RNA sequence: GGGAACGACUCGAGUAGAGUCGAAAAGAACUCACCAGCAAUUGUUUACGACAAGAUUCGACAUUUGCAAAUUACGUAGCGAUCUUCCAGAAUCUUGUCGAAACGUUCCCAAUCGCUACGCCCUAAAUUAGCGAUAAUAAUUCGUUAUUAUCGCUAAAAAAGAAACAACAACAACAAC
Reactivity to 2A3 in 0.01 (KOAc 150mM, MgCl2 10mM, bicine 150mM(pH8.5), 24C), signal-to-noise 5, nucleotides 027 to 126: g030a050a020c010u020c050a070c040c020a020g080c060a090a120u140u120g090u140u180u220a060c020g000a000c010a010a010g000a010u010u020c020g030a020c120a180u180u200u210g050c040a090a120a080u200u090a050c000g010u000a000g000c000g000a020u010c060u230u050c160c040a030g000a000a010u000c000u000u000g000u000c000g000a010a000a000c010g000u000u010c000c000c000a000a000u000c000g000c000u010a000c000g010c010c000c000u100a100a100a040
Reactivity to DMS in 0.01 (KOAc 150mM, MgCl2 10mM, bicine 150mM(pH8.5), 24C), signal-to-noise 6, nucleotides 027 to 126: g010a100a090c060u000c070a100c070c040a110g020c130a100a080u010u010g010u000u000u000a290c050g010a020c010a010a020g010a020u000u000c000g010a130c290a110u020u010u010g010c160a070a060a110u000u000a050c030g010u000a020g010c020g000a010u000c120u010u010c150c140a100g000a020a010u000c000u000u000g010u000c000g010a000a050a130c050g000u000u000c000c000c000a110a030u000c010g010c010u000a010c020g010c010c020c020u000a040a090a130
Chemical mapping of a 177-nucleotide RNA with 2A3 and DMS. Source: RMDB library M2PK90, as collected in RNAgym. The reactions ran in a buffer of 150 mM KOAc, 10 mM MgCl2 and 150 mM bicine (pH 8.5), at 24 C.